[RMDB]
RNA sequence: GGGAACGACUCGAGUAGAGUCGAAAAUCGCAGCGCGCGUCUAGCCAGAAGCCUGAGCCCCAGAGCAUCCCGGGAGCGCCGCGGGCCGGUGCUCGGCUCGUUGGGCCAUGCAGCGGCGGCCGCCGCGCAGAGACUGACAUUUCGAUGUCAGUCUCUGAAAAGAAACAACAACAACAAC
Reactivity to 2A3 in 0.01 (KOAc 150mM, MgCl2 10mM, bicine 150mM(pH8.5), 24C), signal-to-noise 6, nucleotides 027 to 126: u090c030g010c070a030g010c010g000c020g000c020g060u040c040u090a140g010c020c000a140g110a300a010g020c000c020u020g010a030g020c000c000c000c020a000g000a000g000c010a110u200c050c070c020g110g110g010a020g010c010g000c000c000g000c020g020g140g020c140c000g010g000u010g000c000u010c000g020g000c000u010c010g150u080u120g000g000g000c000c000a010u030g000c010a010g020c000g010g000c000g000g000c000c000g000c010c020g000c000g000
Reactivity to DMS in 0.01 (KOAc 150mM, MgCl2 10mM, bicine 150mM(pH8.5), 24C), signal-to-noise 5, nucleotides 027 to 126: u010c040g000c090a110g020c020g000c070g010c050g020u010c020u020a100g010c020c010a120g010a300a140g000c010c070u000g000a140g020c010c020c020c220a120g000a040g020c020a130u020c040c060c060g020g000g020a040g000c020g010c000c010g020c040g010g010g020c110c010g000g010u000g020c020u000c030g000g000c000u000c010g020u010u020g010g000g000c020c000a020u020g000c010a020g000c300g000g020c010g000g000c050c020g030c050c040g030c010g000